An RNA of 170 nucleotides, treated with 2A3 and DMS and read out base by base.
Source: RMDB library 15KLIB, as collected in RNAgym.
The RNA was probed in 150 mM KOAc, 10 mM MgCl2 and 150 mM bicine (pH 8.5) at 24 C.
DMS adducts were read by reverse transcription with MarathonRT.
For 2A3, 44,072 sequencing reads were counted.

RNA sequence: GGGAACGACUCGAGUAGAGUCGAAAAGCACCCAGAGGGAGGAAAUCACACGGAGAGAAACAGACAAAUCACCUCCAGAGGACCCCUUCAGCGAACAGAAGAGUCUCUCACGCGGUAGGAGCAAGCCAUCACCCGAAGUUCGCUUCGGGUAAAAGAAACAACAACAACAAC
Reactivity to 2A3 in 0.01 (KOAc 150mM, MgCl2 10mM, bicine 150mM(pH8.5), 24C), signal-to-noise 9, nucleotides 027 to 129: g020c010a050c010c000c010a030g050a050g040g050g010a100g020g050a030a040a050u060c020a040c010a030c130g020g010a030g000a010g020a040a100a010c060a020g180a020c050a040a100a040u110c020a050c020c000u010c010c020a010g010a020g020g010a040c010c010c010c000u020u040c020a030g020c020g050a030a020c010a030g060a060a000g000a040g060u020c010u010c000u010c050a060c060g030c020g010g010u040a030g010g030a030g020c040a030a010g020c010c010a060u120c030
Reactivity to DMS in 0.01 (KOAc 150mM, MgCl2 10mM, bicine 150mM(pH8.5), 24C), signal-to-noise 9, nucleotides 027 to 129: g050c150a120c040c000c020a110g030a110g050g020g010a060g040g030a060a100a020u000c020a070c030a110c140g070g020a040g030a010g000a100a110a120c130a080g000a070c140a070a090a060u040c050a120c020c020u000c030c030a130g030a040g000g000a170c120c030c030c010u020u040c060a060g050c020g000a020a030c070a000g000a060a020g030a090g000u000c040u020c040u040c020a090c100g000c080g020g030u000a040g030g010a020g000c030a060a070g000c000c030a100u000c120